[RMDB]
The record gives the reactivity of an RNA of 207 nucleotides to DMS and 2A3.
It was measured as part of the RMDB library M2RFPK.
2A3 adducts were read by reverse transcription with SuperScript II with manganese.
The 2A3 profile rests on 679 reads.

RNA sequence: GGGAACGACUCGAGUAGAGUCGAAAACCAUGAGACCGUAACCUUCGUAGUCAUUGAUAAAGGGGCAGGUCUCGCUCUUUUGUCAUUGCGGUUGCCUAGAGGCAUGGUCGUUUACCGCGACUUUCCAAUACGAAGAGGGCCUUCGGGCCCUCUUCAAGCUAAAUCAUGAGUUCGCUCAUGAUUUAGCAAAAGAAACAACAACAACAAC
Reactivity to DMS in 0.01 (KOAc 150mM, MgCl2 10mM, bicine 150mM(pH8.5), 24C), signal-to-noise 1, nucleotides 027 to 156: c040c030a140u000g010a100g000a020c010c020g000u000a160a200c040c000u020u000c110g040u000a110g030u000c140a250u000u000g020a060u000a000a000a020g020g010g030g000c130a100g020g010u020c040u000c000g020c040u010c030u000u000u010u000g040u000c020a140u000u000g010c040g020g020u000u000g000c020c040u000a090g020a160g000g010c080a070u000g020g020u000c010g000u000u000u000a130c240c110g000c000g000a050c050u020u000u000c030c020a050a150u000a210c160g020a050a010g010a040g000g010g000c000c010u010u000c300g070g040g020c000c000c000u000c000u000u000c000a020a210
Reactivity to 2A3 in 0.01 (KOAc 150mM, MgCl2 10mM, bicine 150mM(pH8.5), 24C), signal-to-noise 1, nucleotides 027 to 156: c000c000a040u050g000a010g060a000c020c020g000u040a010a060c020c000u090u060c080g060u080a040g060u080c080a140u130u220g050a020u110a040a030a000g000g000g000g020c050a010g010g030u000c010u010c000g000c000u060c000u000u060u040u070g020u000c020a020u030u100g030c020g020g000u010u060g000c000c010u040a050g010a110g130g020c060a040u050g000g000u030c030g020u060u110u030a070c030c020g000c010g020a020c000u000u060u010c030c000a030a040u050a050c040g000a000a000g000a000g020g000g000c000c000u000u030c080g040g000g010c010c020c000u000c000u000u000c000a000a000